[RMDB]
RNA sequence: GGGAACGACUCGAGUAGAGUCGAAAAAUUGAGUGAUGAGCUGAAAGUGAUCGCGCAAGACAUCCAGUUUCUGGCGGUUAUUGAAGGUGUGGCUCAGAUAGGGGCGAUGUAAUUUGCACGGUAAAUACGGUGAUAUUAUCUUCGGAUAAUAUCACCGAAAAGAAACAACAACAACAAC
Reactivity to DMS in 0.01 (KOAc 150mM, MgCl2 10mM, bicine 150mM(pH8.5), 24C), signal-to-noise 4, nucleotides 027 to 126: a090u000u000g010a060g020u000g000a100u000g020a130g020c010u010g030a100a110a060g040u000g020a020u000c010g030c030g010c070a070a050g000a060c100a130u010c160c150a130g010u010u000u010c050u010g010g020c040g000g010u010u010a060u010u000g010a160a110g000g010u010g010u000g010g000c020u000c040a040g010a100u000a060g010g010g000g010c070g000a020u010g010u010a050a110u000u010u000g030c060a060c040g010g010u000a070a030a090u010a110
Reactivity to 2A3 in 0.01 (KOAc 150mM, MgCl2 10mM, bicine 150mM(pH8.5), 24C), signal-to-noise 2, nucleotides 027 to 126: a000u030u040g030a000g030u080g060a100u040g000a080g010c030u040g060a060a090a030g070u060g020a030u020c020g000c010g000c090a030a020g020a030c010a030u040c060c050a070g050u000u070u040c070u000g030g000c030g000g040u080u000a030u000u100g040a040a010g030g000u060g030u060g050g000c020u040c030a010g000a020u090a050g010g050g010g000c020g010a020u080g070u140a100a130u080u030u100g020c060a040c030g040g030u160a060a060a110u190a070
Overview: Structure probing data (DMS and 2A3) for a 177-nucleotide construct. For DMS the reverse transcriptase was MarathonRT. Values cover nucleotides 27 to 126.